[RMDB]
RNA sequence: GGGAACGACUCGAGUAGAGUCGAAAAAGAAGCAGGGGCUACACGGAAAGGGAGCCCGAGGGUCCUGCAGAGCCCGAGGUCGGGACCCCGCGCGUGCAGUGCCAAUGGGCUGCGGCUGGGCUGAGCGCGAAAGCUUAACAUUCGUGUUAAGCUUUCGAAAAGAAACAACAACAACAAC
Reactivity to DMS in 0.01 (KOAc 150mM, MgCl2 10mM, bicine 150mM(pH8.5), 24C), signal-to-noise 4, nucleotides 027 to 126: a090g000a130a100g010c080a060g010g010g000g010c030u000a060c090a100c080g000g000a090a130a120g000g020g000a100g010c020c020c010g010a090g000g020g010u000c030c000u000g030c050a210g000a180g010c010c010c010g000a100g000g020u000c040g030g010g010a070c010c010c010c050g010c220g020c030g010u000g010c030a030g010u000g010c020c050a070a130u000g020g000g000c010u000g000c070g000g000c040u000g000g010g010c030u010g000a090g010c140g010
Reactivity to 2A3 in 0.01 (KOAc 150mM, MgCl2 10mM, bicine 150mM(pH8.5), 24C), signal-to-noise 2, nucleotides 027 to 126: a000g110a040a000g010c050a020g000g000g020g030c000u060a030c120a020c060g060g060a140a040a040g070g010g030a020g030c010c000c030g010a040g010g000g020u030c020c030u050g010c030a020g020a040g220c000c050c050g030a030g060g050u180c060g000g100g000a110c000c030c000c010g000c000g010c010g010u050g010c010a020g000u060g170c010c000a040a120u150g030g000g010c030u050g010c010g000g000c030u050g020g000g000c000u020g010a040g050c070g020